This 177-nucleotide RNA was probed chemically with DMS and 2A3.
High DMS reactivity at an A or C suggests that its Watson-Crick edge is free.
Source: RMDB library TTRDEL, as collected in RNAgym.
For 2A3 the reverse transcriptase was SuperScript II with manganese.
The DMS profile rests on 5,391 reads.
The RNA was probed in 150 mM KOAc, 10 mM MgCl2 and 150 mM bicine (pH 8.5) at 24 C.
RNA sequence: GGGAACGACUCGAGUAGAGUCGAAAAGAUAUGGAGCUGAACUACUCUAAGAGGCUAAGACAGUAGUUCGGAAACGAACUAUCGAGCCUCUGGCAGCUCCUAAGUCAAACCACAGUUCGCUGUGGAACUCUGCAUACUAGUUCGCUAGUAUGCAGAGAAAAGAAACAACAACAACAAC
Reactivity to DMS in 0.01 (KOAc 150mM, MgCl2 10mM, bicine 150mM(pH8.5), 24C), signal-to-noise 6, nucleotides 027 to 126: g010a030u000a090u000g000g010a020g010c000u020g010a110a120c050u000a060c150u010c160u020a090a050g000a020g010g020c000u010a210a070g020a050c300a070g000u000a000g000u000u000c000g010g000a020a040a040c000g010a010a000c000u000a010u000c020g000a010g000c000c000u000c000u000g000g010c010a010g000c000u000c000c000u000a010a050g000u000c050a090a080a110c010c010a010c010a020g000u000u010c270g000c010u000g000u010g010g000a070a070
Reactivity to 2A3 in 0.01 (KOAc 150mM, MgCl2 10mM, bicine 150mM(pH8.5), 24C), signal-to-noise 4, nucleotides 027 to 126: g010a000u020a030u090g000g000a000g000c000u010g040a170a190c040u120a080c030u170c050u220a300a260g010a010g010g030c010u080a070a030g040a020c030a020g010u020a000g010u000u000c000g010g000a000a000a020c000g000a000a010c000u000a010u070c000g000a000g000c000c010u000c020u010g020g000c010a000g000c010u020c000c000u000a030a010g000u000c020a090a010a120c010c000a000c010a000g020u130u170c240g060c120u000g000u010g010g010a030a040